[RMDB]
About this RNA:
Structure probing data (2A3) for a 207-nucleotide construct. The RNA was probed in 150 mM KOAc, 10 mM MgCl2 and 150 mM bicine (pH 8.5) at 24 C. For 2A3 the reverse transcriptase was SuperScript II with manganese. Reactivities are given for positions 27 through 156. Source: RMDB library OK3TST, as collected in RNAgym.
RNA sequence: GGGAACGACUCGAGUAGAGUCGAAAAACCUGUGCUGCCACGCCAAAAGCGUAGCAGUGCACGGAUUCGAAGACAUCGCUGAUCUUGUCCGGACACACACGCGUUUUUUCCAGGCGUAUCAUGGUCUCUAGAGGUUUAAAGUUCAGACGGUACGUCGUCCUACGCCAACGUUCGCGUUGGCGUAGGAAAAAGAAACAACAACAACAAC
Reactivity to 2A3 in 0.01 (KOAc 150mM, MgCl2 10mM, bicine 150mM(pH8.5), 24C), signal-to-noise 1, nucleotides 027 to 156: a010c000c000u000g000u050g050c020u000g020c010c000a000c000g000c000c000a000a030a000a030g040c040g000u000a030g000c000a000g000u000g030c000a020c100g040g000a120u130u100c080g050a080a040g050a010c000a030u070c170g040c170u130g050a120u020c060u070u130g000u020c080c090g080g110a100c080a010c000a020c000a120c090g090c060g030u090u010u000u010u090u060c060c070a010g020g000c000g000u010a030u150c010a080u130g120g070u000c000u000c020u170a190g020a100g140g000u120u170u190a200a080a020g090u030u000c000a010g050a050c010g000g000u120a000c070g000u000c000g000